The record gives the reactivity of an RNA of 177 nucleotides to DMS and 2A3. DMS adducts were read by reverse transcription with MarathonRT. Conditions: 150 mM KOAc, 10 mM MgCl2 and 150 mM bicine (pH 8.5), 24 C. For 2A3 the reverse transcriptase was SuperScript II with manganese. The 2A3 profile rests on 4,221 reads.
RNA sequence: GGGAACGACUCGAGUAGAGUCGAAAAGAUAUGGAUGGUCCCGAGAAGCACUGGAAGCUAAGACAGUGACUCGGAAACGAGUCAUCGAGCUUCCAGUGAGCUUCGUUUGACGGACCAUCCUAAGUCACUGAACUAACUUGUUCGCAAGUUAGUUCAGAAAAGAAACAACAACAACAAC
Reactivity to DMS in 0.01 (KOAc 150mM, MgCl2 10mM, bicine 150mM(pH8.5), 24C), signal-to-noise 4, nucleotides 027 to 126: g010a060u010a300u010g000g000a020u000g000g000u000c000c000c030g010a110g010a030a010g020c010a070c010u020g000g020a020a030g010c010u010a180a130g030a150c300a100g020u000g000a000c010u000c000g000g000a100a100a140c000g010a000g010u000c000a010u000c050g010a020g020c000u000u000c000c000a000g000u000g000a060g030c010u000u000c020g020u000u010u010g010a230c300g000g010a010c010c010a000u010c000c000u000a000a070g020u000c060a200
Reactivity to 2A3 in 0.01 (KOAc 150mM, MgCl2 10mM, bicine 150mM(pH8.5), 24C), signal-to-noise 1, nucleotides 027 to 126: g010a020u070a060u160g000g000a010u000g030g000u010c020c000c000g030a090g010a020a000g020c010a000c030u020g000g010a010a020g010c010u110a260a100g200a090c130a090g080u010g000a020c000u000c000g020g000a030a070a050c000g000a000g010u000c000a020u130c020g010a000g000c000u010u020c000c010a000g000u000g000a010g010c000u000u000c010g050u130u280u280g080a070c030g000g000a000c010c000a000u000c000c000u020a000a010g010u000c030a020